Record summary:
Structure probing data (DMS and 2A3) for a 207-nucleotide construct. The reactions ran in a buffer of 150 mM KOAc, 10 mM MgCl2 and 150 mM bicine (pH 8.5), at 24 C. DMS adducts were read by reverse transcription with MarathonRT. The data come from the RNA Mapping Database (RMDB), library RNAMAK. Reactivities are given for positions 27 through 156.

RNA sequence: GGGAACGACUCGAGUAGAGUCGAAAACAGGGGUAGUUCGCUACCCCUGAAAAAGCGUACUACCAUGGAUCUCGCAGAUACGAAAUAUGUCCCAAAUAGGACAUACACGAGUAGAGACCCAUGGUAUCGCAAAAAGAUGGGCCUUCGGGCCCAUCAAAGUACUACUGCGAUUCGUCGCAGUAGUACUAAAAGAAACAACAACAACAAC
Reactivity to DMS in 0.01 (KOAc 150mM, MgCl2 10mM, bicine 150mM(pH8.5), 24C), signal-to-noise 1, nucleotides 027 to 156: c020a070g020g000g020g040u000a000g020u020u030c260g000c000u000a040c000c000c000c000u010g000a000a030a030a050a130g000c000g030u000a110c160u000a020c020c010a040u000g050g000a020u000c000u000c000g060c190a250g020a300u000a060c050g040a200a160a130u000a030u000g010u000c000c000c010a020a180a300u000a090g000g000a040c000a010u000a030c000a230c080g030a300g000u020a110g020a010g000a020c000c000c000a000u010g000g000u000a010u030c010g000c010a040a060a070a110a160g020a050u000g000g050g030c000c010u000u000c240g020g030g100c000c000c010a010u000c010a010a070
Reactivity to 2A3 in 0.01 (KOAc 150mM, MgCl2 10mM, bicine 150mM(pH8.5), 24C), signal-to-noise 2, nucleotides 027 to 156: c000a020g000g000g010g010u020a000g010u040u050c160g020c080u000a000c000c010c000c000u010g000a000a000a000a000a000g000c010g020u070a060c060u000a000c030c000a000u000g000g000a030u000c000u030c050g060c110a050g050a220u110a190c080g060a040a160a060u040a020u010g000u020c010c040c010a080a300a160u300a170g000g000a000c000a000u030a010c050a020c060g070a090g060u080a090g010a000g000a010c000c000c000a000u000g000g000u000a000u000c000g000c000a090a000a000a090a000g010a010u020g000g000g010c000c030u010u040c170g130g050g020c010c000c000a000u000c000a000a000